[RMDB]
RNA sequence: GGGAACGACUCGAGUAGAGUCGAAAAACAAACAAUAGAAUGAAACAAAGAGUCGUGCAAAGGAGAGGCUCGACAGAUGCACGACAAAGCGAGCCUACAAAAGACAGCGGGAAAACCGCUGUCGAAACGUCAUGGAGGAGUUCGCUCCUUCAUGACGAAAAGAAACAACAACAACAAC
Reactivity to DMS in 0.01 (KOAc 150mM, MgCl2 10mM, bicine 150mM(pH8.5), 24C), signal-to-noise 2, nucleotides 027 to 126: a060c040a100a090a130c170a100a130u000a090g030a080a090u030g010a110a050a070c090a080a070a070g000a100g000u000c000g000u000g000c020a060a100a190g050g030a080g000a020g000g000c010u010c010g010a110c040a070g020a050u020g000c020a020c060g020a020c000a040a050a070g020c010g000a010g020c000c000u040a030c090a050a050a150a110g000a010c000a020g000c000g000g000g010a120a060a080a080c000c000g000c000u000g000u010c000g000a030a050a080
Reactivity to 2A3 in 0.01 (KOAc 150mM, MgCl2 10mM, bicine 150mM(pH8.5), 24C), signal-to-noise 1, nucleotides 027 to 126: a000c020a000a070a000c000a010a030u010a050g070a030a070u080g040a080a040a000c000a000a170a020g060a030g000u000c020g010u000g000c010a060a050a020g060g030a050g030a030g000g000c000u000c000g040a000c010a000g140a050u080g000c000a000c010g030a010c030a020a000a010g030c000g000a000g000c000c000u020a040c020a000a080a000a000g000a000c010a000g000c000g000g030g020a060a030a030a020c000c000g000c000u020g000u000c000g000a000a000a000
Structure probing data (DMS and 2A3) for a 177-nucleotide construct. Source: RMDB library OK1LIB, as collected in RNAgym. The 2A3 profile rests on 3,084 reads. DMS adducts were read by reverse transcription with MarathonRT.